[RMDB]
RNA sequence: GGGAACGACUCGAGUAGAGUCGAAAAGAUAUGGAUCCUGCCUAACGAUAAGCUCCAUUCGGAAACGAAUGAGAGCUUUUGACGUUAGUGGUCAGGAUCCUAAGUCAAACACGCACUUCGGUGCGUGGUGUUGUGCAUAGUUCGCUAUGCACAACACAAAAGAAACAACAACAACAAC
Reactivity to DMS in 0.01 (KOAc 150mM, MgCl2 10mM, bicine 150mM(pH8.5), 24C), signal-to-noise 5, nucleotides 027 to 126: g000a040u000a300u010g000g010a020u000c000c000u000g010c020c000u000a000a020c000g040a190u010a020a010g010c000u000c010c000a020u000u000c010g000g010a160a130a260c000g020a020a000u000g010a140g000a010g010c000u000u010u000u000g010a220c130g000u000u000a010g020u010g030g010u010c010a010g000g000a000u000c000c000u000a020a110g000u000c030a100a120a300c000a010c000g000c000a020c000u000u030c200g010g010u010g010c000g030u010g000
Reactivity to 2A3 in 0.01 (KOAc 150mM, MgCl2 10mM, bicine 150mM(pH8.5), 24C), signal-to-noise 2, nucleotides 027 to 126: g060a030u070a060u140g020g000a020u000c020c000u010g020c010c000u000a010a010c050g070a120u010a080a030g020c020u070c000c000a000u000u010c020g040g060a080a050a070c050g020a010a000u080g010a110g000a010g300c060u000u000u000u010g020a000c010g000u010u000a040g050u120g290g180u300c000a000g000g000a000u020c000c000u000a010a000g020u000c010a030a070a110c010a010c000g000c010a000c010u070u100c300g130g010u030g000c000g010u010g000